[RMDB]
RNA sequence: GGGAACGACUCGAGUAGAGUCGAAAACUUUCAAACUGUCCGGCGCCGAUGGGGAAACCUGGUGUUUGGCCGGAACGUGGCGCCGAGCCUCGAUAAUAUCAGCAGUUACGUCCAGGGGUGUGGUGUAAACAGGAAAAUUCUUCGGAAUUUUCCUGUUAAAAGAAACAACAACAACAAC
Reactivity to DMS in 0.01 (KOAc 150mM, MgCl2 10mM, bicine 150mM(pH8.5), 24C), signal-to-noise 2, nucleotides 027 to 126: c050u000u000u010c070a090a080a080c090u000g000u000c070c000g020g030c050g030c020c000g020a100u020g000g020g000g000a110a100a190c020c000u000g020g020u010g020u000u000u000g030g000c010c010g000g010a050a030c060g000u000g010g030c020g040c040c020g000a110g020c030c040u000c100g000a100u000a090a060u000a300u000c060a030g030c050a050g000u010u010a060c140g010u000c020c020a070g010g000g010g000u010g000u000g000g010u000g000u000a060

Chemical mapping of a 177-nucleotide RNA with DMS. For DMS, 1,632 sequencing reads were counted. The RNA was probed in 150 mM KOAc, 10 mM MgCl2 and 150 mM bicine (pH 8.5) at 24 C. For DMS the reverse transcriptase was MarathonRT.